[RMDB]
RNA sequence: GGGAACGACUCGAGUAGAGUCGAAAAACUACCACGCCGCCGGUGCGAUCAAGAACGGCCUGAAGUUCUACGAGAUGACGGGUUUCGCGAAGUCCAAUGCGGCGGGAAUCGAGGCCACGUUGGCCAACAUAGUGAGCAAAUUCGUUUGCUCACUAUGAAAAGAAACAACAACAACAAC
Reactivity to DMS in 0.01 (KOAc 150mM, MgCl2 10mM, bicine 150mM(pH8.5), 24C), signal-to-noise 6, nucleotides 027 to 126: a040c110u020a160c030c010a170c090g010c000c000g040c020c110g000g020u010g020c160g000a040u010c050a040a130g010a130a080c150g030g000c010c010u000g010a040a260g010u000u000c020u010a150c290g020a160g010a020u020g000a300c040g000g000g000u000u010u030c030g030c040g010a090a160g000u000c010c020a050a060u030g030c000g010g010c000g000g000g000a100a050u050c080g000a140g010g010c000c020a060c140g000u010u020g000g010c000c030a080a200
Reactivity to 2A3 in 0.01 (KOAc 150mM, MgCl2 10mM, bicine 150mM(pH8.5), 24C), signal-to-noise 9, nucleotides 027 to 126: a000c080u140a120c010c020a130c050g040c000c000g000c010c030g090g030u090g050c140g010a020u040c020a010a050g140a200a020c030g020g010c000c000u040g020a050a020g010u040u030c050u100a130c180g100a100g020a300u060g020a030c020g010g030g000u030u210u300c020g000c010g020a040a010g010u000c000c000a050a050u150g090c010g000g000c030g010g010g000a010a030u140c070g050a110g020g000c030c000a090c190g130u130u240g010g000c000c000a010a000
This 177-nucleotide RNA was probed chemically with DMS and 2A3. The RNA was probed in 150 mM KOAc, 10 mM MgCl2 and 150 mM bicine (pH 8.5) at 24 C. The data come from the RNA Mapping Database (RMDB), library OK1LIB. 2A3 adducts were read by reverse transcription with SuperScript II with manganese.